[RMDB]
RNA sequence: GGGAACGACUCGAGUAGAGUCGAAAAGAAGGAGAUGAAAGCGACUUUAGAAUCGGCUAACUGAGCAGCCAGAUUCAGACGGCAAGUAUCGUCGCCAGAGAUACAGUCGCAAAUAGCCGAAGGAGAAAUAUGGGACCAUAUUCGUAUGGUCCCAUAUAAAAGAAACAACAACAACAAC
Reactivity to DMS in 0.01 (KOAc 150mM, MgCl2 10mM, bicine 150mM(pH8.5), 24C), signal-to-noise 5, nucleotides 027 to 126: g000a100a100g010g020a090g010a100u020g010a080a150a100g000c020g020a070c030u020u010u030a060g000a050a040u020c010g000g020c000u000a100a110c110u020g000a100g010c120a060g000c040c020a140g030a040u000u000c020a060g000a150c080g000g000c050a050a140g010u020a040u010c070g000u010c070g000c070c100a100g010a090g000a090u000a040c140a060g000u000c020g000c010a040a090a140u020a050g000c010c030g000a120a090g000g030a130g000a090a110
Reactivity to 2A3 in 0.01 (KOAc 150mM, MgCl2 10mM, bicine 150mM(pH8.5), 24C), signal-to-noise 4, nucleotides 027 to 126: g150a040a020g050g050a070g010a060u150g050a000a120a000g010c000g000a010c010u090u160u150a050g010a010a000u000c000g000g000c000u010a120a020c060u110g060a040g070c030a000g000c020c010a090g000a030u010u020c000a000g010a050c010g000g010c010a070a030g070u040a100u140c040g050u050c000g080c080c010a030g020a000g000a100u040a030c020a040g010u010c010g000c000a010a110a030u070a010g010c010c040g010a020a030g120g110a050g080a000a140
Source: RMDB library OK1LIB, as collected in RNAgym.
The record gives the reactivity of an RNA of 177 nucleotides to DMS and 2A3.
2A3 is a SHAPE reagent: it acylates the 2'-hydroxyl of flexible nucleotides of all four kinds.
The reactions ran in a buffer of 150 mM KOAc, 10 mM MgCl2 and 150 mM bicine (pH 8.5), at 24 C.
Values are in units of 0.01, from 0 to 300, in steps of 10.
DMS adducts were read by reverse transcription with MarathonRT.